RNA sequence: GGGAACGACUCGAGUAGAGUCGAAAAGAUAUGGAUCAGGGUAGCUUUUGACGCCAGUCGGAAACGACUGAGCGAUAAGCUACAUUGAUCCUAAGUCAAAAUCCAUUGCAGUUCGCUGCAAUGGAAACAUGCAGUGAGGGUUCGCCCUCACUGCAUGAAAAGAAACAACAACAACAAC
Reactivity to DMS in 0.01 (KOAc 150mM, MgCl2 10mM, bicine 150mM(pH8.5), 24C), signal-to-noise 2, nucleotides 027 to 126: g010a040u020a300u010g000g010a020u000c000a000g010g010g020u000a010g020c010u000u000u000u000g010a160c070g020c010c000a010g000u000c010g000g000a080a070a140c000g010a040c000u000g010a090g060c010g010a060u000a000a030g010c000u000a000c000a050u000u000g000a000u000c000c000u000a000a110g000u010c010a070a090a120a090u010c000c000a000u000u000g000c000a020g010u010u020c260g020c000u010g020c000a040a000u010g010g000a010a060a080
Reactivity to 2A3 in 0.01 (KOAc 150mM, MgCl2 10mM, bicine 150mM(pH8.5), 24C), signal-to-noise 2, nucleotides 027 to 126: g010a030u090a020u100g010g000a000u010c000a020g120g030g000u020a010g010c010u150u060u200u160g140a070c020g000c010c000a010g000u000c020g030g070a050a030a050c020g010a010c000u020g030a020g050c000g010a000u030a070a020g010c000u000a010c010a010u000u000g000a000u000c000c000u010a080a040g000u010c030a090a020a020a210u000c000c000a000u010u000g000c000a020g010u010u170c190g120c150u020g000c000a000a010u010g010g000a040a020a000
This 177-nucleotide RNA was probed chemically with DMS and 2A3. For 2A3, 3,401 sequencing reads were counted. For 2A3 the reverse transcriptase was SuperScript II with manganese. For DMS the reverse transcriptase was MarathonRT. Conditions: 150 mM KOAc, 10 mM MgCl2 and 150 mM bicine (pH 8.5), 24 C. The DMS profile rests on 1,651 reads.